Annotation: Source: RMDB library M2RFPK, as collected in RNAgym. An RNA of 207 nucleotides, treated with DMS and 2A3 and read out base by base. The DMS profile rests on 7,851 reads. For 2A3, 4,198 sequencing reads were counted.
RNA sequence: GGGAACGACUCGAGUAGAGUCGAAAAGGUGCUCUGAAUGGAGUGCUCUACUGAGAUUAUAAAUUAGAAGGUAAGCUAUUAUCUCUUACAACAGGGCAGGGCUUGUUGGAAUAGGCGGUAAAGUCUAAAAACUACCUCACCUUCGGGUGAGGUAGAAUCAAUAGACUAGGUUCGCCUAGUCUAUUGAAAAAGAAACAACAACAACAAC
Reactivity to DMS in 0.01 (KOAc 150mM, MgCl2 10mM, bicine 150mM(pH8.5), 24C), signal-to-noise 3, nucleotides 027 to 156: g010g020u000g010c010u000c010u040g000a160a180u010g020g010a040g050u000g010c030u000c040u000a070c060u000g000a110g010a120u000u010a090u000a060a070a160u000u000a110g010a190a150g020g010u000a040a080g010c080u000a080u000u000a080u010c010u000c030u000u010a130c060a080a190c030a050g030g020g040c060a070g000g010g030c030u000u000g010u000u000g000g000a070a080u000a060g020g010c030g010g010u000a060a080a110g010u000c020u010a040a050a070a070a180c020u000a000c000c000u000c000a010c000c000u010u000c300g040g040g050u000g000a000g000g010u010a000g010a010a050
Reactivity to 2A3 in 0.01 (KOAc 150mM, MgCl2 10mM, bicine 150mM(pH8.5), 24C), signal-to-noise 5, nucleotides 027 to 156: g020g000u040g010c020u010c010u060g180a140a120u240g030g000a030g010u060g000c010u060c050u050a050c030u040g030a020g030a090u120u100a080u170a190a120a090u130u120a060g060a140a010g080g000u090a040a020g010c010u030a060u130u040a060u160c020u000c010u010u080a050c020a110a020c010a060g020g020g010c010a010g000g000g040c030u040u030g020u010u010g010g010a080a090u040a050g030g000c020g020g030u100a090a060a010g010u010c030u080a010a050a010a020a040c000u000a000c000c000u000c000a000c010c000u020u040c200g070g000g000u000g000a000g000g000u000a000g000a000a000